[RMDB]
RNA sequence: GGGAACGACUCGAGUAGAGUCGAAAACCUCGAGUUCAGACUGGCGCUGCAUGCAACAUCGAGGGAUCGGUGCAAGCGAUUGAUCGUUGUCCUUUAUCCUGAUGUUGAACAUUUCGAUGAUCUAGAAGUAUUAUUUAAUAUUCGUAUUAAAUAAUACAAAAGAAACAACAACAACAAC
Reactivity to DMS in 0.01 (KOAc 150mM, MgCl2 10mM, bicine 150mM(pH8.5), 24C), signal-to-noise 3, nucleotides 027 to 126: c050c010u010c040g010a050g000u010u000c040a080g000a160c060u010g010g030c050g000c070u000g000c110a070u000g000c040a030a030c010a010u010c010g010a050g040g000g000a010u000c140g010g010u010g010c040a070a080g020c020g000a060u010u010g010a120u000c010g010u000u000g020u000c010c010u000u000u000a040u010c000c010u000g010a030u010g010u000u000g000a070a170c110a110u000u000u000c040g010a080u000g010a100u000c040u010a130g000a190a220
Reactivity to 2A3 in 0.01 (KOAc 150mM, MgCl2 10mM, bicine 150mM(pH8.5), 24C), signal-to-noise 1, nucleotides 027 to 126: c010c000u000c030g030a000g010u040u110c010a020g040a090c050u080g030g020c120g020c050u010g010c030a030u100g000c000a000a000c000a000u030c010g180a070g040g030g020a000u040c070g000g030u120g020c020a110a080g190c000g010a020u090u210g130a150u180c010g000u010u030g000u000c010c000u030u100u050a100u010c010c000u000g000a020u000g000u010u020g010a030a030c040a030u040u040u090c100g010a040u070g030a040u040c050u300a050g260a140a020